Structure probing data (DMS) for a 177-nucleotide construct. DMS (dimethyl sulfate) methylates the pairing face of unpaired adenines and cytosines. Source: RMDB library TTRDES, as collected in RNAgym. Conditions: 150 mM KOAc, 10 mM MgCl2 and 150 mM bicine (pH 8.5), 24 C. For DMS, 877 sequencing reads were counted.
[RMDB]
RNA sequence: GGGAACGACUCGAGUAGAGUCGAAAAGAUAUGGAAUAGGACGGGAGAAUGUUAUCGGAAACGAUAACCAUUCUUUGAUCGUCUAUUCCUAAGUCAAAACGUUUUCCUCCUUCGGGAGGAAAACGAACCUUUACUGUGCCUUCGGGCACAGUAAAGGAAAAGAAACAACAACAACAAC
Reactivity to DMS in 0.01 (KOAc 150mM, MgCl2 10mM, bicine 150mM(pH8.5), 24C), signal-to-noise 2, nucleotides 027 to 126: g000a020u000a000u030g000g020a030a020u030a030g010g000a080c000g010g000g000a000g060a030a000u010g000u000u000a010u000c000g000g000a010a000a010c000g040a010u000a000a000c300c300a000u000u000c000u020u020u020g000a040u010c000g010u010c000u000a000u010u000c000c000u010a000a000g000u000c000a030a100a070a130c000g000u000u000u000u010c000c010u000c000c000u000u010c300g010g020g020a070g000g000a000a000a010a010c000g000a020a070